[RMDB]
RNA sequence: GGGAACGACUCGAGUAGAGUCGAAAACUUAUCCCGGGGAACUCGGCGAAUCGUCCCCACAUAGCAGUGCCCGGAGCCCCUUCCAAAGGGAACCGAGGGGGGUGGCUUGGAACAUGGGGGACCAGUGCCCUUAUAAAUAGUUCGCUAUUUAUAAGGGAAAAGAAACAACAACAACAAC
Reactivity to DMS in 0.01 (KOAc 150mM, MgCl2 10mM, bicine 150mM(pH8.5), 24C), signal-to-noise 2, nucleotides 027 to 126: c160u000u030a140u010c010c010c000g010g000g010g020a070a080c090u010c100g000g000c020g020a070a080u010c080g000u000c010c000c000c000a060c130a090u000a120g010c120a090g020u000g010c050c000c040g000g010a070g020c010c010c000c010u020u000c020c070a000a200a150g020g010g030a070a090c050c020g000a300g000g000g010g000g010g010u010g040g000c010u010u010g010g000a140a020c060a020u000g000g010g000g010g020a050c060c090a060g000u000g010
Reactivity to 2A3 in 0.01 (KOAc 150mM, MgCl2 10mM, bicine 150mM(pH8.5), 24C), signal-to-noise 1, nucleotides 027 to 126: c020u140u080a040u180c020c010c000g040g000g000g010a080a050c050u060c170g070g000c070g130a050a190u100c030g000u030c000c010c030c000a060c000a030u090a020g110c140a040g070u050g070c020c010c020g050g010a000g000c000c000c000c000u040u010c010c000a050a050a000g000g000g030a060a030c050c010g030a050g030g000g010g010g030g070u210g000g000c030u000u040g030g030a010a020c010a050u040g040g000g020g010g040a000c010c030a050g050u050g080

An RNA of 177 nucleotides, treated with DMS and 2A3 and read out base by base. Reactivities are given for positions 27 through 126. Source: RMDB library VIROID, as collected in RNAgym.